[RMDB]
RNA sequence: GGGAACGACUCGAGUAGAGUCGAAAAGAUAUGGAUGUCUAGCUUUUGACGCUCCAUGGGUCGGAAACGACCCAGUGGAGCGAUAAGCUAGGACAUCCUAAGUCAAAGAACGGGUUCGCCCGUUCAACGACUCAACAUGGUUCGCCAUGUUGAGUCGAAAAGAAACAACAACAACAAC
Reactivity to DMS in 0.01 (KOAc 150mM, MgCl2 10mM, bicine 150mM(pH8.5), 24C), signal-to-noise 1, nucleotides 027 to 126: g010a070u010a300u040g010g010a000u000g000u000c020u000a010g000c000u000u000u000u000g000a300c140g030c000u000c010c000a050u000g010g030g010u000c000g000g000a070a090a300c010g010a030c010c000c000a010g020u010g010g020a020g040c010g000a000u000a020a030g000c000u000a020g020g010a010c000a000u000c000c000u020a000a060g000u010c030a120a170a250g000a020a000c030g010g080g020u000u000c300g030c000c010c010g000u000u010c030a020a220
An RNA of 177 nucleotides, treated with DMS and read out base by base.